[RMDB]
RNA sequence: GGGAACGACUCGAGUAGAGUCGAAAACCGGUACGGGGUAUCGUAGCACCGGCGGGCGUGUUGCACCAGGGGUGAAGGACGCAGGCAGCGGUGUGCUACGCGUGGUGCCGUGAGGAUCGCCGGGGAAGACGUGAUGUCGAUUCGUCGACAUCACGUCAAAAGAAACAACAACAACAAC
Reactivity to 2A3 in 0.01 (KOAc 150mM, MgCl2 10mM, bicine 150mM(pH8.5), 24C), signal-to-noise 2, nucleotides 027 to 126: c040c020g010g010u110a030c030g000g000g020g170u120a040u170c010g000u000a010g000c010a020c020c000g070g000c030g060g000g000c000g010u300g190u150u070g030c010a020c000c040a120g160g080g050g000u040g030a040a030g010g030a020c000g000c070a030g200g000c010a060g050c050g030g100u110g020u020g130c000u020a010c000g030c050g110u140g000g020u030g020c010c040g050u090g030a050g040g060a070u070c040g000c020c000g000g000g000g000a030a040
Reactivity to DMS in 0.01 (KOAc 150mM, MgCl2 10mM, bicine 150mM(pH8.5), 24C), signal-to-noise 2, nucleotides 027 to 126: c020c010g010g010u000a040c050g010g030g000g040u000a070u020c020g020u000a040g000c030a050c010c020g020g010c020g010g000g000c000g010u000g020u000u000g000c020a030c020c020a250g020g040g040g040u000g010a080a030g010g000a020c010g000c010a060g000g020c020a130g020c040g020g040u000g020u000g010c010u000a000c010g010c160g030u000g010g010u010g000c010c020g000u000g010a070g000g010a070u010c130g010c010c000g000g000g000g000a120a140
Conditions: 150 mM KOAc, 10 mM MgCl2 and 150 mM bicine (pH 8.5), 24 C. This 177-nucleotide RNA was probed chemically with 2A3 and DMS. For 2A3, 1,889 sequencing reads were counted. DMS adducts were read by reverse transcription with MarathonRT. The DMS profile rests on 2,682 reads.